[RMDB]
RNA sequence: GGGAACGACUCGAGUAGAGUCGAAAAUAUCGAAAUCAAGGAUGGCGUUCGAUAGAGACUUCUGGUGUCGCAGAGGAAGAAGCGACUUCUGGCCUUGUUAUGCUUUGUAUUCAUGGGUCACCUGUGAAAGGUCUAUUUAUUUCGAUAAAUAGACCUUAAAAGAAACAACAACAACAAC
Reactivity to DMS in 0.01 (KOAc 150mM, MgCl2 10mM, bicine 150mM(pH8.5), 24C), signal-to-noise 8, nucleotides 027 to 126: u000a050u000c030g000a040a060a080u000c100a090a130g010g000a090u000g010g000c150g010u000u000c010g010a040u000a040g000a180g010a100c050u010u000c040u000g010g000u000g010u000c050g010c040a060g000a100g010g010a110a090g000a090a100g010c080g000a060c050u000u000c040u000g010g010c030c030u010u000g010u000u000a070u000g000c050u000u000u000g010u000a070u010u000c040a040u000g000g000g000u000c070a070c030c020u000g010u000g010a070
Reactivity to 2A3 in 0.01 (KOAc 150mM, MgCl2 10mM, bicine 150mM(pH8.5), 24C), signal-to-noise 4, nucleotides 027 to 126: u100a020u010c010g020a010a000a050u100c060a080a050g140g020a120u080g050g060c060g020u020u020c000g020a010u030a040g080a010g020a050c020u060u050c040u120g060g020u050g030u060c020g000c070a010g020a040g150g030a060a040g020a040a010g020c030g050a030c000u030u000c030u040g020g000c010c000u030u030g050u050u050a060u100g020c030u050u120u140g030u100a110u040u080c040a070u060g030g010g040u100c070a090c080c020u060g000u020g090a100